[RMDB]
RNA sequence: GGGAACGACUCGAGUAGAGUCGAAAAUUUCUUUGAUCUAUUAGAGACUGCAAGUUUUGAGGGUGAUUGUAAAUCUGAACUACUGAGAGUUGGAUGCUAAAGGCUCAAGUAAGAAGGCCAAGGCAGCUGGGGGUGCAAGACUACUGCCUCCUUUGAACACUUUUAAAUGAUUCGUCAUUUAAAAGUGAAAAGAAACAACAACAACAAC
Reactivity to DMS in 0.01 (KOAc 150mM, MgCl2 10mM, bicine 150mM(pH8.5), 24C), signal-to-noise 2, nucleotides 027 to 156: u000u010u000c030u020u010u000g000a080u010c010u020a080u000u000a120g000a150g010a050c020u000g020c030a080a120g020u000u010u000u010g020a100g020g030g070u000g010a070u020u000g010u010a030a040a080u000c050u020g020a040a090c050u000a070c060u010g010a150g010a050g020u000u000g040g020a090u020g000c030u000a050a090a130g030g060c010u000c020a050a120g030u000a080a180g030a080a100g010g010c080c030a040a170g030g030c030a040g000c010u000g020g030g010g070g030u000g020c010a020a070g010a090c040u000a030c030u000g020c020c030u000c020c020u000u000u000g010a100a280
Reactivity to 2A3 in 0.01 (KOAc 150mM, MgCl2 10mM, bicine 150mM(pH8.5), 24C), signal-to-noise 3, nucleotides 027 to 156: u030u040u030c010u080u040u050g020a030u020c040u080a130u130u150a130g050a010g010a070c020u050g030c060a120a080g010u070u080u180u150g030a040g000g000g000u040g040a050u000u120g030u070a040a030a050u040c060u070g030a040a020c030u050a010c010u100g050a030g010a010g170u020u090g050g020a030u050g010c030u070a080a080a100g000g010c010u050c090a020a080g040u020a050a070g070a040a020g000g000c040c040a010a040g010g000c000a010g000c070u030g000g010g010g000g000u020g000c020a030a010g040a040c020u080a020c000u070g000c010c010u000c000c010u020u020u040g030a050a000

This 207-nucleotide RNA was probed chemically with DMS and 2A3.
For 2A3 the reverse transcriptase was SuperScript II with manganese.
The RNA was probed in 150 mM KOAc, 10 mM MgCl2 and 150 mM bicine (pH 8.5) at 24 C.
For DMS the reverse transcriptase was MarathonRT.
In probing experiments dimethyl sulfate is read out at A N1 and C N3, which are open when not base-paired.